Source: RMDB library RFM100, as collected in RNAgym.
The record gives the reactivity of an RNA of 177 nucleotides to 2A3 and DMS.
The RNA was probed in 150 mM KOAc, 10 mM MgCl2 and 150 mM bicine (pH 8.5) at 24 C.
Values cover nucleotides 27 to 126.
RNA sequence: GGGAACGACUCGAGUAGAGUCGAAAAGUGACCUACGUGUAGGGGUGAAAGGCCCAUCGAACCGGGCAACAGCUGGUUCCAACCGAAACAUGUCGAAGCAUGACCUCUGCCGAGGUAGUUCGUGGGGUCCCGUGAAACAGUUCGCUGUUUCACGGGAAAAAGAAACAACAACAACAAC
Reactivity to 2A3 in 0.01 (KOAc 150mM, MgCl2 10mM, bicine 150mM(pH8.5), 24C), signal-to-noise 1, nucleotides 027 to 126: g100u030g140a010c010c000u040a090c000g200u180g010u120a000g000g020g020g000u000g050a020a070a050g020g000c050c000c010a000u090c020g050a000a040c000c170g040g000g010c100a210a030c140a060g080c000u000g040g000u050u000c000c040a100a030c000c000g060a180a030a000c060a000u140g020u160c300g130a050a000g000c000a000u040g040a070c000c000u000c000u020g000c000c000g000a000g040g000u000a120g020u000u020c060g030u100g000g000g000g000
Reactivity to DMS in 0.01 (KOAc 150mM, MgCl2 10mM, bicine 150mM(pH8.5), 24C), signal-to-noise 1, nucleotides 027 to 126: g000u000g010a050c020c000u000a030c000g040u040g110u000a030g000g000g080g030u000g000a060a220a280g010g000c000c000c000a060u020c280g000a050a040c080c010g020g000g010c110a130a110c180a060g000c000u040g000g000u000u000c030c110a170a130c250c060g000a020a070a230c020a010u000g000u000c090g120a240a040g080c000a000u020g000a090c050c000u000c010u020g110c000c030g000a000g010g060u000a030g000u000u000c000g000u000g000g000g000g000

The DMS profile rests on 1,238 reads. For 2A3, 635 sequencing reads were counted.